[RMDB]
RNA sequence: GGGAACGACUCGAGUAGAGUCGAAAACAUCUACUGAAAUGACGCACGUCACCGGUACCAACGGCGUUCCAACUGACGAAACCGUCAUUGUCAUCAGAACUCCAACCAGUGAAGGUCUAAUCAGCACCGCAGCAUACCAGUUCGCUGGUAUGCUGCGAAAAGAAACAACAACAACAAC
Reactivity to 2A3 in 0.01 (KOAc 150mM, MgCl2 10mM, bicine 150mM(pH8.5), 24C), signal-to-noise 3, nucleotides 027 to 126: c020a130u070c020u040a060c000u060g010a020a000a030u070g010a000c010g030c080a090c030g090u040c020a010c040c080g000g060u110a080c030c010a140a100c080g060g000c090g000u000u000c010c000a050a000c060u000g000a000c010g100a180a010a050c070c010g010u000c020a000u010u010g170u040c030a150u100c000a030g010a010a040c010u000c030c000a020a010c000c000a020g000u010g070a040a060g050g000u030c030u130a130a140u050c050a000g040c050a000c010
Reactivity to DMS in 0.01 (KOAc 150mM, MgCl2 10mM, bicine 150mM(pH8.5), 24C), signal-to-noise 1, nucleotides 027 to 126: c220a080u000c070u000a040c100u000g040a040a020a030u000g050a050c010g040c270a150c110g000u000c000a000c300c100g000g000u000a060c050c040a060a150c020g000g000c100g060u000u000c170c020a070a300c300u000g000a000c040g000a220a190a150c170c060g010u000c000a010u000u000g050u000c000a110u000c300a000g050a040a020c050u000c020c060a020a200c020c130a020g000u000g000a080a090g000g000u010c070u010a160a060u000c090a000g010c010a030c000